Chemical mapping of a 207-nucleotide RNA with 2A3. Conditions: 150 mM KOAc, 10 mM MgCl2 and 150 mM bicine (pH 8.5), 24 C. Reactivities are given for positions 27 through 156. The data come from the RNA Mapping Database (RMDB), library RNAMAK. For 2A3, 792 sequencing reads were counted.
RNA sequence: GGGAACGACUCGAGUAGAGUCGAAAAGAUGCGUAGUUCGCUACGCAUCAAAUCCUAAGUCCUCGUUGAUCUUUAUUCUGCGACGAUCGUAUCGGAAACGAUACGGGAGCAGGUAAAGGGAGAGGAUAUGGAAAACCAGUGAUGUUCGCAUCACUGGCGGGGGUAUGUCUUUCGAGACAUACCCCCGAAAAGAAACAACAACAACAAC
Reactivity to 2A3 in 0.01 (KOAc 150mM, MgCl2 10mM, bicine 150mM(pH8.5), 24C), signal-to-noise 1, nucleotides 027 to 156: g000a010u000g000c000g020u020a000g030u010u140c280g060c090u000a000c000g000c000a040u000c000a040a040a040u030c000c000u080a120a050g000u000c000c000u000c000g090u140u020g000a000u010c010u090u070u020a060u300u300c010u010g020c040g300a300c040g000a160u020c030g000u000a010u000c010g010g030a050a060a060c050g000a000u000a010c030g000g020g000a000g010c000a010g060g000u000a000a000a000g020g000g000a000g000a000g000g000a000u020a040u030g000g040a060a160a000a000c010c000a000g030u010g000a020u020g030u060u120c300g000c130a010u000c000a000c000u000g000g000